[RMDB]
RNA sequence: GGGAACGACUCGAGUAGAGUCGAAAAUGGUGUUAAGUGGAAUAAGUGGCCCGAUAUACAUAUAUGUACAGGGGGCUACAUAUAUGUAUAUGCCCCCUCGCGUCAGUAUAAGUAGGUAUAAGGUGGAACGAUCGUCAUUAUUCGUAAUGACGAUCGUAAAAGAAACAACAACAACAAC
Reactivity to 2A3 in 0.01 (KOAc 150mM, MgCl2 10mM, bicine 150mM(pH8.5), 24C), signal-to-noise 2, nucleotides 027 to 126: u160g000g010u000g010u130u020a140a070g030u010g030g160a100a180u060a130a110g050u050g110g050c000c010c000g020a020u000a000u000a030c000a000u000a000u020a000u050g000u060a030c050a130g080g030g010g000g000c020u000a000c010a000u060a000u000a020u000g060u020a000u010a000u080g000c010c000c000c000c000u000c000g010c000g080u030c030a020g020u000a020u000a250a000g090u030a090g060g000u160a100u010a140a000g020g010u110g000g000a020
Reactivity to DMS in 0.01 (KOAc 150mM, MgCl2 10mM, bicine 150mM(pH8.5), 24C), signal-to-noise 2, nucleotides 027 to 126: u010g050g000u000g000u000u000a100a050g010u020g000g000a130a060u010a170a110g000u000g000g000c010c110c000g000a100u010a010u000a000c000a020u000a010u020a010u010g010u000a150c140a070g000g010g000g010g010c130u000a030c040a000u020a030u010a060u000g010u010a030u010a020u030g000c020c020c000c010c030u010c040g000c050g000u030c040a030g000u000a080u030a040a060g000u000a000g000g020u000a080u020a050a090g000g010u020g000g000a120